[RMDB]
Chemical mapping of a 177-nucleotide RNA with DMS and 2A3.
RNA sequence: GGGAACGACUCGAGUAGAGUCGAAAAGAUAUGGAGAAGGCUUUUGACGCGGCAAUCCUCGGAAACGAGGAUUAUCGCGAUAAGCCUCUCCUAAGUCAAAAGUCAGAGCUCUUCGGAGCUCUGACAACAAGAAUAUAAGGUUCGCCUUAUAUUCUUGAAAAGAAACAACAACAACAAC
Reactivity to DMS in 0.01 (KOAc 150mM, MgCl2 10mM, bicine 150mM(pH8.5), 24C), signal-to-noise 5, nucleotides 027 to 126: g000a040u010a300u000g000g000a020g000a070a070g020g010c000u000u000u000u010g030a170c070g010c010g020g010c080a010a000u000c000c000u000c000g000g000a080a080a140c000g010a010g000g010a000u000u000a000u000c000g020c010g010a070u000a000a010g000c010c000u000c000u000c000c000u010a010a100g000u000c050a090a080a130a110g000u000c000a010g000a000g010c000u000c000u000u000c220g010g000a010g010c000u000c000u000g010a000c000a030a090
Reactivity to 2A3 in 0.01 (KOAc 150mM, MgCl2 10mM, bicine 150mM(pH8.5), 24C), signal-to-noise 4, nucleotides 027 to 126: g010a010u070a040u180g020g020a030g030a270a180g030g000c030u120u070u150u220g200a140c050g000c000g000g000c010a000a000u000c000c000u000c000g020g020a070a080a050c020g010a000g000g000a000u000u000a000u000c000g000c010g000a000u000a000a000g000c000c000u000c010u000c000c000u000a090a030g020u020c030a120a010a060a130g000u010c010a000g010a000g000c010u010c020u100u250c300g110g000a000g010c000u000c000u000g010a000c010a010a000

Annotation
The RNA was probed in 150 mM KOAc, 10 mM MgCl2 and 150 mM bicine (pH 8.5) at 24 C. The DMS profile rests on 6,736 reads. The data come from the RNA Mapping Database (RMDB), library TTRDEL.